[RMDB]
RNA sequence: GGGAACGACUCGAGUAGAGUCGAAAAGGCUUGGUGAUGGGCACCCGCAGUGGCGACCUGGACCCGGGCGUCAUCAGCUACUUGUGGCGCACCGCGAGGAUGGGUGUCGAGGACAUCGAAUCGAUGCGGUAAUGACCAGCUUCGGCUGGUCAUUACCAAAAGAAACAACAACAACAAC
Reactivity to 2A3 in 0.01 (KOAc 150mM, MgCl2 10mM, bicine 150mM(pH8.5), 24C), signal-to-noise 1, nucleotides 027 to 126: g120g000c030u060u070g000g030u070g010a110u110g020g000g000c020a000c000c020c010g000c010a050g010u050g030g010c000g030a300c010c010u040g000g170a130c000c000c000g000g010g040c000g080u030c030a030u060c030a030g020c020u090a020c050u170u060g000u020g030g000c000g010c040a150c130c000g030c020g050a010g070g000a050u030g000g000g010u030g000u030c000g020a140g030g040a090c010a070u030c050g060a050a050u000c130g000a000u030g000c090
Reactivity to DMS in 0.01 (KOAc 150mM, MgCl2 10mM, bicine 150mM(pH8.5), 24C), signal-to-noise 1, nucleotides 027 to 126: g000g040c110u000u000g000g060u000g030a100u000g000g010g000c240a080c120c090c060g010c030a100g000u000g000g000c010g000a160c030c100u000g030g000a180c060c000c020g000g000g030c010g000u000c060a000u030c110a100g000c020u000a190c010u140u000g000u000g000g040c040g000c050a090c050c020g020c040g010a120g030g000a240u030g000g000g010u000g000u070c030g020a180g000g000a220c000a230u010c020g000a070a120u000c070g000a000u000g000c130

This 177-nucleotide RNA was probed chemically with 2A3 and DMS.
DMS (dimethyl sulfate) methylates the pairing face of unpaired adenines and cytosines.
For 2A3, 601 sequencing reads were counted.